[RMDB]
RNA sequence: GGGAACGACUCGAGUAGAGUCGAAAAUGCGUUCGCGGGGCCCGUCCCUUCAACCACUUUAAGCGCAGCAUGUAUCGCGCCGGCCGCUUUCACUGGGAGCGCUUUCCGGACGCCCGGCCGCGGUACGGAUUCGAAUAGGGUUCGCCCUAUUCGAAUCAAAAGAAACAACAACAACAAC
Reactivity to DMS in 0.01 (KOAc 150mM, MgCl2 10mM, bicine 150mM(pH8.5), 24C), signal-to-noise 2, nucleotides 027 to 126: u020g000c060g010u000u000c090g000c010g000g000g020g000c020c090c060g020u010c000c020c010u000u000c090a040a090c140c090a100c170u000u030u030a040a080g000c020g020c020a190g030c140a100u030g010u000a000u000c050g020c010g030c000c000g000g000c290c030g030c070u020u000u030c120a170c150u010g000g000g010a050g000c090g000c150u000u000u000c030c000g000g020a110c100g000c220c000c000g000g010c070c070g000c040g000g000u040a000c000g010
Reactivity to 2A3 in 0.01 (KOAc 150mM, MgCl2 10mM, bicine 150mM(pH8.5), 24C), signal-to-noise 5, nucleotides 027 to 126: u110g010c010g030u040u130c080g000c060g040g020g030g020c010c060c000g090u170c010c000c000u060u070c060a110a100c020c030a080c080u110u140u180a090a030g010c020g000c070a030g040c020a070u170g010u010a010u020c000g000c000g000c000c000g010g000c020c020g030c040u060u160u130c140a170c150u130g040g000g010a050g040c080g020c020u020u040u030c000c000g030g010a010c010g000c000c000c000g000g000c100c010g000c000g000g000u000a000c000g030